[RMDB]
RNA sequence: GGGAACGACUCGAGUAGAGUCGAAAAGCACUGCCUGUUUAUGGUGGUCGUUAACGUCAAAACCAUAAAACCCGCGUUGGAUCGAGGAAGUUCUAUGAAAGUUUAUCAUAGGAUAUGGGCGACCGAGCUAUAAUAAUUUUUUCGAAAAUUAUUAUAGAAAAGAAACAACAACAACAAC
Reactivity to DMS in 0.01 (KOAc 150mM, MgCl2 10mM, bicine 150mM(pH8.5), 24C), signal-to-noise 5, nucleotides 027 to 126: g000c080a090c120u000g000c040c000u020g020u010u010u020a020u010g010g030u000g000g000u000c070g010u020u030a080a120c120g040u020c050a050a110a160a070c020c010a040u000a030a020a080a110c030c030c010g020c100g000u000u020g010g000a130u010c020g010a070g000g000a110a200g010u000u000c000u010a010u000g010a010a160a230g000u050u030u020a060u000c010a000u000a010g000g010a010u000a040u020g010g010g010c020g000a110c010c020g010a090g000
Reactivity to 2A3 in 0.01 (KOAc 150mM, MgCl2 10mM, bicine 150mM(pH8.5), 24C), signal-to-noise 5, nucleotides 027 to 126: g030c050a040c170u100g010c010c000u060g030u080u050u070a050u040g000g010u020g050g010u010c020g020u070u190a110a070c010g020u020c060a100a120a020a050c010c000a020u080a020a040a030a050c020c020c010g050c010g090u080u130g060g030a130u130c020g010a020g020g030a090a080g010u010u010c000u010a010u010g030a050a120a120g080u120u260u210a110u040c000a000u010a010g000g000a000u010a050u210g000g000g020c000g000a010c010c010g000a010g020

The record gives the reactivity of an RNA of 177 nucleotides to DMS and 2A3. For 2A3 the reverse transcriptase was SuperScript II with manganese. The RNA was probed in 150 mM KOAc, 10 mM MgCl2 and 150 mM bicine (pH 8.5) at 24 C. High DMS reactivity at an A or C suggests that its Watson-Crick edge is free.